[RMDB]
RNA sequence: GGGAACGACUCGAGUAGAGUCGAAAAGUUAGGUGAGGCGGCUACACGAACAUAGGCCACUGACCCCGAACGUCGAGAGACGCCCCGGGUCAGGGCAGCUCUUCCCGGCUUAAGGGUUGAGCCCAGGUAUCACCCUGGCUAUUCGUAGCCAGGGUAAACAUGAAUUGUCUUUCGAGACAAUUCAUGUAAAAGAAACAACAACAACAAC
Reactivity to 2A3 in 0.01 (KOAc 150mM, MgCl2 10mM, bicine 150mM(pH8.5), 24C), signal-to-noise 2, nucleotides 027 to 156: g060u080u060a020g010g010u000g030a040g010g040c030g030g000c030u070a030c090a030c080g070a140a000c080a130u180a130g130g000c050c050a220c070u000g000a000c000c030c000c010g020a080a000c000g000u000c010g020a030g010a000g000a120c000g030c010c050c050c000g000g000g000u000c000a000g010g000g000c030a010g000c000u020c000u030u010c020c000c000g030g030c030u090u100a040a120g000g020g000u020u030g020a010g020c000c030c040a060g070g060u090a040u230c030a030c010c010c010u010g000g000c000u020a020u060u100c220g150u050a000g000c000c000a000g000g030g030u010a020a020
Reactivity to DMS in 0.01 (KOAc 150mM, MgCl2 10mM, bicine 150mM(pH8.5), 24C), signal-to-noise 1, nucleotides 027 to 156: g020u000u000a050g030g010u000g010a070g000g030c030g010g010c000u000a060c050a080c090g000a060a080c070a180u000a100g020g020c020c010a080c010u000g000a050c020c010c000c030g000a050a040c050g030u000c010g000a300g000a300g020a030c010g010c000c010c060c200g010g010g010u010c010a000g020g000g000c040a090g000c030u020c010u010u010c010c000c000g030g010c170u010u000a060a150g010g000g010u000u000g000a110g020c000c000c020a130g000g020u000a080u000c090a090c010c000c010u010g030g000c010u000a030u000u010c230g010u000a050g010c000c010a010g000g030g000u000a000a010